The data come from the RNA Mapping Database (RMDB), library M2RFPK. This 207-nucleotide RNA was probed chemically with DMS and 2A3. The 2A3 profile rests on 2,326 reads. The RNA was probed in 150 mM KOAc, 10 mM MgCl2 and 150 mM bicine (pH 8.5) at 24 C.
RNA sequence: GGGAACGACUCGAGUAGAGUCGAAAACGCACUCGCAGCUUAAUAACCUGCGCUGAGCCCUUCUCCCCCAGCUUGGCUGUGUCCUAGGGAAUUGGAAGGUCAUCCUUCACAGGAUCGUGUGGAAGUCAUUACUCGUGAGUGUUCGCACUCACGAGAAUCCAAAAAGAUAGUUCGCUAUCUUUUUGGAAAAAGAAACAACAACAACAAC
Reactivity to DMS in 0.01 (KOAc 150mM, MgCl2 10mM, bicine 150mM(pH8.5), 24C), signal-to-noise 4, nucleotides 027 to 156: c060g010c030a090c040u000c020g020c020a040g000c080u000u030a150a140u010a120a110c250c010u000g020c030g020c110u000g000a070g010c030c020c040u010u000c060u000c020c010c000c020c050a080g040c040u000u010g030g030c020u010g010u000g000u000c020c010u000a110g010g020g020a060a140u000u010g010g010a060a050g000g010u000c060a130u010c020c000u010u000c100a130c110a100g010g010a050u000c050g020u010g030u000g010g000a110a200g000u010c040a100u010u000a120c000u000c010g030u000g010a000g030u000g020u000u010c250g010c020a010c000u000c000a010c000g010a010g000a030a070
Reactivity to 2A3 in 0.01 (KOAc 150mM, MgCl2 10mM, bicine 150mM(pH8.5), 24C), signal-to-noise 3, nucleotides 027 to 156: c040g020c010a040c000u030c000g020c000a000g000c010u010u030a020a040u030a090a040c010c000u000g010c000g040c170u050g040a040g020c000c000c000u100u070c110u070c040c010c010c010c000a010g000c030u050u130g060g000c020u050g030u020g030u160c020c030u030a040g020g010g080a060a080u110u130g050g010a000a020g010g040u070c070a050u060c020c000u110u130c060a050c040a040g030g020a040u050c040g030u040g000u020g070g070a030a010g070u070c040a060u060u170a080c000u000c000g000u000g010a000g000u010g050u050u000c090g040c040a000c000u010c000a000c000g000a000g000a000a020